[RMDB]
RNA sequence: GGGAACGACUCGAGUAGAGUCGAAAAUUGGUUAAUAUCGAUCACUUUAUCAAAAUGUGCAAGCCCAUCAAUACUUUUAUAAGGAGCAACAUUGCUAUUUUCAGCACGAUUUAACGCAUUUUGUGCACUCUAUGGGAGCAUUCGUGCUCCCAUAGAGAAAAGAAACAACAACAACAAC
Reactivity to DMS in 0.01 (KOAc 150mM, MgCl2 10mM, bicine 150mM(pH8.5), 24C), signal-to-noise 1, nucleotides 027 to 126: u000u000g000g020u000u000a040a070u000a060u020c060g040a070u000c070a050c090u000u000u000a030u010c120a040a110a040a030u020g020u000g000c090a090a100g010c010c040c020a040u020c160a030a120u000a050c050u000u000u000u010a120u030a090a040g000g000a080g000c050a040a090c120a100u020u000g000c050u000a070u000u000u000u000c150a040g010c060a020c020g010a080u000u000u010a050a090c120g000c070a040u000u000u000u000g000u010g010c120a210
Reactivity to 2A3 in 0.01 (KOAc 150mM, MgCl2 10mM, bicine 150mM(pH8.5), 24C), signal-to-noise 1, nucleotides 027 to 126: u040u040g040g020u000u040a170a060u150a110u130c030g020a040u000c040a030c050u100u100u010a110u100c060a030a080a050a070u070g010u040g000c050a020a020g000c050c030c000a010u070c000a000a090u090a240c060u020u110u100u100a170u090a210a000g080g030a070g030c000a000a060c020a120u000u090g020c020u040a060u190u110u020u130c050a020g020c040a000c010g060a010u060u050u140a130a030c050g070c090a030u040u090u000u070g100u040g030c000a050
The data come from the RNA Mapping Database (RMDB), library OK2TST.
This 177-nucleotide RNA was probed chemically with DMS and 2A3.
The 2A3 profile rests on 811 reads.
For 2A3 the reverse transcriptase was SuperScript II with manganese.
The reactions ran in a buffer of 150 mM KOAc, 10 mM MgCl2 and 150 mM bicine (pH 8.5), at 24 C.